[RMDB]
RNA sequence: GGGAACGACUCGAGUAGAGUCGAAAAUAGCACAUCUCUCCAGCCUCAAACUAUUCCUUCCUCAGGGCAGAAUUUCCCCGUGACGCUCUCUUGUCAUCAUCACCUUCUUCUUGUCUGAACUCAUCAAUAAUUCGAUGUCGUUCGCGACAUCGAAUUAAAAAGAAACAACAACAACAAC
Reactivity to 2A3 in 0.01 (KOAc 150mM, MgCl2 10mM, bicine 150mM(pH8.5), 24C), signal-to-noise 2, nucleotides 027 to 126: u130a020g010c020a010c000a090u020c030u030c040u010c020c000a010g020c020c010u070c010a060a070a040c030u060a100u090u090c020c000u010u060c010c030u040c010a040g000g030g040c020a020g030a080a090u000u030u060c000c000c010c000g020u050g020a020c030g010c010u010c000u000c010u020u040g000u020c000a020u000c000a030u050c030a090c040c000u020u020c000u070u020c000u010u060g060u010c020u000g030a070a060c040u000c030a150u010c010a030a130
Reactivity to DMS in 0.01 (KOAc 150mM, MgCl2 10mM, bicine 150mM(pH8.5), 24C), signal-to-noise 2, nucleotides 027 to 126: u000a110g020c040a010c040a070u000c020u000c000u010c000c030a110g000c070c060u030c040a030a030a050c030u000a060u000u000c030c020u020u000c020c040u000c060a070g030g000g000c090a050g000a100a070u020u000u000c000c000c030c060g030u000g030a080c130g000c020u010c010u000c060u000u000g000u010c030a060u020c080a070u060c070a050c060c020u000u000c020u000u000c050u020u010g000u000c040u000g000a050a080c040u050c030a060u020c120a080a180
This 177-nucleotide RNA was probed chemically with 2A3 and DMS.
It was measured as part of the RMDB libraries RFM100 and RFMREP.
The reactions ran in a buffer of 150 mM KOAc, 10 mM MgCl2 and 150 mM bicine (pH 8.5), at 24 C.
For 2A3 the reverse transcriptase was SuperScript II with manganese.
The 2A3 profile rests on 1,214 reads.